[RMDB]
RNA sequence: GGGAACGACUCGAGUAGAGUCGAAAAUCGUGACUAGUUCCGCCGCCUUGUAUCACACGAGCGUGUGUAUCCCCGUGCGACUCAAGGCGGCGGAACUAGCGACGAGCGCCCUUCCAUCGGAGCUGGGACAGUGAUAGCUUUUCGAAGCUAUCACUGUAAAAGAAACAACAACAACAAC
Reactivity to DMS in 0.01 (KOAc 150mM, MgCl2 10mM, bicine 150mM(pH8.5), 24C), signal-to-noise 4, nucleotides 027 to 126: u000c010g010u000g000a090c000u000a010g000u000u000c010c000g010c000c000g000c010c000u000u020g030u000a070u000c000a020c000a010c020g010a080g010c200g050u020g020u020g010u030a110u020c050c020c010c010g030u000g010c060g010a030c060u000c000a010a010g000g000c000g010g020c010g000g000a000a000c000u000a010g030c150g010a020c000g010a020g000c130g000c000c000c020u020u010c040c040a070u020c060g000g020a060g010c090u000g010g000g010
An RNA of 177 nucleotides, treated with DMS and read out base by base. The data come from the RNA Mapping Database (RMDB), libraries RFM100 and RFMREP. Reactivities are given for positions 27 through 126.